About this RNA:
This 177-nucleotide RNA was probed chemically with DMS and 2A3. For 2A3, 3,467 sequencing reads were counted.
RNA sequence: GGGAACGACUCGAGUAGAGUCGAAAAAAUAAACCGCAGGCCGUGGCAAAACCAGCUCACCGAUGCCGAGACGCAGCAAAAUGUGAUGUUUGCCGGGUGCUGCAAACGCUCGGCGACCGCAAACGAAGAAAACGAAUUUAUUCGUAAAUUCGUUUUCAAAAGAAACAACAACAACAAC
Reactivity to DMS in 0.01 (KOAc 150mM, MgCl2 10mM, bicine 150mM(pH8.5), 24C), signal-to-noise 5, nucleotides 027 to 126: a070a080u010a040a060a120c080c020g020c110a060g010g020c050c030g040u000g020g000c040a060a030a060a130c070c050a080g010c040u000c050a050c070c040g030a110u000g010c030c010g000a060g020a170c130g000c040a040g010c060a040a030a070a090u000g020u000g000a090u000g010u000u000u010g020c020c010g000g010g000u000g000c070u010g020c160a050a080a170c090g010c000u000c000g000g000c000g000a030c020c020g010c100a040a050a080c150g010a130a130
Reactivity to 2A3 in 0.01 (KOAc 150mM, MgCl2 10mM, bicine 150mM(pH8.5), 24C), signal-to-noise 2, nucleotides 027 to 126: a000a000u110a040a060a000c000c000g000c030a030g030g000c010c020g080u030g040g000c040a000a010a000a100c030c010a030g010c010u020c040a050c020c030g050a040u150g010c010c000g010a020g000a020c050g030c030a050g000c040a020a030a090a120u110g040u050g050a100u080g040u030u070u100g010c000c000g010g000g020u010g000c020u040g000c010a080a090a000c040g000c010u000c000g010g020c010g010a010c030c020g000c060a060a060a020c080g060a100a070
Conditions: 150 mM KOAc, 10 mM MgCl2 and 150 mM bicine (pH 8.5), 24 C. DMS adducts were read by reverse transcription with MarathonRT.